[RMDB]
This 207-nucleotide RNA was probed chemically with 2A3.

RNA sequence: GGGAACGACUCGAGUAGAGUCGAAAAGAAGCACGGCUUGUGUGUGAUCCUUUUGGAUUGCACUGUAUAUCCUACGCUGUGCGAAGGUAGGCCCAUUGUGGCGAGAGCCACUUACAGUACAGCUUAUUAUGACGCAUCGCUGUACGAACGAUGCUGACAUGCACGAGUACUUCGGUACUCGUGCAUGAAAAGAAACAACAACAACAAC
Reactivity to 2A3 in 0.01 (KOAc 150mM, MgCl2 10mM, bicine 150mM(pH8.5), 24C), signal-to-noise 1, nucleotides 027 to 156: g110a020a020g000c000a000c000g020g040c030u120u120g120u040g040u020g000u000g170a030u050c000c000u130u190u130u300g000g010a010u000u000g000c030a000c000u000g160u040a160u000a030u110c070c080u080a030c050g040c000u000g000u000g000c000g000a050a000g000g000u200a040g030g130c000c020c030a030u060u170g000u000g020g010c020g000a040g000a000g040c000c000a000c000u000u050a050c010a000g050u000a000c000a000g010c000u040u010a060u190u130a070u300g050a040c050g090c140a000u060c050g060c000u000g050u030a060c020g000a020a000c000g030a030u010g030c050u010g040a000
The reactions ran in a buffer of 150 mM KOAc, 10 mM MgCl2 and 150 mM bicine (pH 8.5), at 24 C.